[RMDB]
RNA sequence: GGGAACGACUCGAGUAGAGUCGAAAACGCCAUCGAGCACGUAGUCGCCGCCUUUUCCUGAGCCGUGCCUGACGGCGCGGGUGCUCAGUGCGCCGGCAUCGGAUCCGGCGCCCGGUUCGGUCAGGCACGGACGCUAUCAUUUCGAUGAUAGCGUCCGAAAAGAAACAACAACAACAAC
Reactivity to DMS in 0.01 (KOAc 150mM, MgCl2 10mM, bicine 150mM(pH8.5), 24C), signal-to-noise 2, nucleotides 027 to 126: c150g010c050c020a110u020c120g000a050g000c000a010c030g010u000a100g000u020c030g020c030c020g000c040c050u010u010u000u020c020c020u000g020a090g010c040c010g020u000g000c000c000u000g020a040c020g000g000c030g010c030g020g000g010u000g000c020u000c050a160g010u000g020c000g000c000c000g000g010c120a270u000c120g000g010a120u000c020c020g000g000c010g000c010c070c050g010g010u000u010c050g010g010u000c010a000g000g020c010a080
Reactivity to 2A3 in 0.01 (KOAc 150mM, MgCl2 10mM, bicine 150mM(pH8.5), 24C), signal-to-noise 2, nucleotides 027 to 126: c020g060c030c000a110u160c130g020a010g030c010a010c090g140u150a070g110u190c010g030c040c010g050c010c010u100u170u070u040c000c040u060g030a040g060c020c000g020u030g000c000c000u030g020a020c020g000g000c040g010c040g070g070g000u040g000c020u040c030a020g030u040g010c040g000c000c000g000g020c040a150u270c130g140g040a130u040c010c000g020g010c000g000c000c000c000g040g000u100u070c040g030g020u000c010a010g010g000c010a000